[RMDB]
RNA sequence: GGGAACGACUCGAGUAGAGUCGAAAACCUACUCAAUACGUCCUCGUCGUACAGAACGGUAACAUGUUUUCCGAACAUCCGCGCUGGGGUAUACGAGUAUACACCUUACCCAACCCUCGCCAACGGGAGUGCAUCCACGAGUUCGCUCGUGGAUGAAAGCCCCUACUAACUUCGGUUAGUAGGGGCUAAAAGAAACAACAACAACAAC
Reactivity to 2A3 in 0.01 (KOAc 150mM, MgCl2 10mM, bicine 150mM(pH8.5), 24C), signal-to-noise 2, nucleotides 027 to 156: c000c000u040a000c030u030c080a010a090u050a130c030g110u040c030c010u030c020g140u040c010g000u090a130c080a100g070a080a020c010g090g000u070a090a020c080a280u120g020u050u030u110u020c050c050g000a000a000c000a110u000c010c040g000c020g060c100u070g000g000g000g080u100a000u010a040c040g000a020g040u030a020u010a050c050a050c000c030u070u140a060c000c000c000a070a010c040c000c000u010c020g020c030c020a000a050c020g040g000g000a050g060u110g040c000a000u000c000c000a000c010g000a010g010u030u120c160g130c110u000c000g000u000g000g000a000u000g050a010a010